[RMDB]
RNA sequence: GGGAACGACUCGAGUAGAGUCGAAAAAAUUCAGCCUAUAUACCGCCAUCUUCAGCAAACCCUAAAAAGGAACAAUAGUAAGCACAAUCAUAGCACAUAAAAACGUUAGGUCAAGGUGUAGCUUAUGGGUUGGAAAGAAAUGGGCUACAUUUUCUACGCGUUUGUUUAUGUUCGCAUAAACAAACGCAAAAGAAACAACAACAACAAC
Reactivity to 2A3 in 0.01 (KOAc 150mM, MgCl2 10mM, bicine 150mM(pH8.5), 24C), signal-to-noise 2, nucleotides 027 to 156: a010a000u110u050c040a030g000c000c020u100a080u000a010u040a190c050c020g020c000c010a020u020c080u030u050c010a030g000c030a060a070a160c010c000c030u070a100a140a000a010a020g020g000a070a010c050a030a130u110a030g090u100a110a020g000c010a050c020a020a050u110c030a030u100a070g030c000a020c020a060u150a110a090a040a070a010c110g060u130u080a030g020g060u060c040a070a000g000g000u030g000u030a030g000c020u030u060a030u070g050g000g000u060u040g080g070a000a040a000g080a000a110a030u090g010g010g000c000u010a020c020a030u090u080u010u000c030u020a020c060